Source information
Structure probing data (2A3 and DMS) for a 177-nucleotide construct. Values are in units of 0.01, from 0 to 300, in steps of 10. Reactivities are given for positions 27 through 126. Conditions: 150 mM KOAc, 10 mM MgCl2 and 150 mM bicine (pH 8.5), 24 C.
RNA sequence: GGGAACGACUCGAGUAGAGUCGAAAACACAUUCGCGUUGGAUCGCGCACGUUUGACGUGUCGCGUGUUACGCGAGUGGAUGACGGUGAGUUAUCUCUGAUCGCGGUCCCGGAUGGGCCGGAACACAUCGACUGCAUGACUUCGGUCAUGCAGUCGAAAAAGAAACAACAACAACAAC
Reactivity to 2A3 in 0.01 (KOAc 150mM, MgCl2 10mM, bicine 150mM(pH8.5), 24C), signal-to-noise 2, nucleotides 027 to 126: c050a000c000a000u000u000c010g040c010g060u020u020g220g100a130u030c020g000c020g020c020a000c000g010u030u160u300g240a020c000g010u030g070u210c050g000c000g000u050g030u050u030a000c000g000c030g020a000g000u010g000g040a020u060g020a000c070g070g080u100g090a090g020u130u000a040u040c030u020c070u070g100a120u090c050g010c010g210g000u130c000c010c050g100g030a250u300g030g050g020c010c010g010g030a130a010c060a000c000a120
Reactivity to DMS in 0.01 (KOAc 150mM, MgCl2 10mM, bicine 150mM(pH8.5), 24C), signal-to-noise 1, nucleotides 027 to 126: c160a230c000a020u000u000c000g030c000g010u000u000g010g000a050u000c010g000c010g000c000a000c000g000u000u010u030g020a070c000g010u000g000u000c010g050c000g010u010g000u000u000a010c000g020c030g000a010g010u000g000g040a050u000g010a090c090g030g050u000g000a190g020u010u000a140u010c020u040c050u000g000a070u020c160g040c030g040g000u000c000c000c110g000g010a170u010g020g010g020c000c000g010g000a020a090c140a070c190a140